[RMDB]
This 177-nucleotide RNA was probed chemically with 2A3 and DMS.
The reactions ran in a buffer of 150 mM KOAc, 10 mM MgCl2 and 150 mM bicine (pH 8.5), at 24 C.
Source: RMDB library M2PK90, as collected in RNAgym.
For 2A3, 914 sequencing reads were counted.
Reactivities are given for positions 27 through 126.
DMS adducts were read by reverse transcription with MarathonRT.

RNA sequence: GGGAACGACUCGAGUAGAGUCGAAAAUAAAAUGGUAAGAACGGUUCCAAAGGAGCCGAAGGUCAUAGCUAUGGCAUCGAUCUAAUAUCUUAUCAAUUAGGUGACGAGCUUGGCACUGAUCAAAAAACUAUGAUACCUCGUUCGCGAGGUAUCAUAGAAAAGAAACAACAACAACAAC
Reactivity to 2A3 in 0.01 (KOAc 150mM, MgCl2 10mM, bicine 150mM(pH8.5), 24C), signal-to-noise 1, nucleotides 027 to 126: u150a010a070a050a040u110g070g000u070a070a020g030a150a000c000g000g000u000u010c020c000a260a190a130g040g010a000g040c010c100g070a070a040g020g000u040c000a040u050a040g040c010u050a050u220g060g000c010a010u020c010g000a000u010c010u000a000a020u050a090u130c110u160u170a100u300c040a100a050u040u020a010g020g040u000g000a030c010g020a010g000c040u000u020g010g020c000a010c050u050g040a000u120c150a010a040a020a040a000a000
Reactivity to DMS in 0.01 (KOAc 150mM, MgCl2 10mM, bicine 150mM(pH8.5), 24C), signal-to-noise 1, nucleotides 027 to 126: u030a070a100a040a060u000g010g010u030a040a030g010a050a300c020g010g000u000u000c000c000a070a110a160g070g010a010g010c000c010g050a050a030g000g010u000c020a060u000a210g070c020u010a030u000g050g010c000a030u000c050g010a050u000c000u000a010a020u000a100u010c140u000u020a060u000c060a060a020u010u010a000g000g020u000g010a020c010g000a020g000c050u000u040g000g000c020a170c250u000g010a030u000c020a010a000a050a070a060a100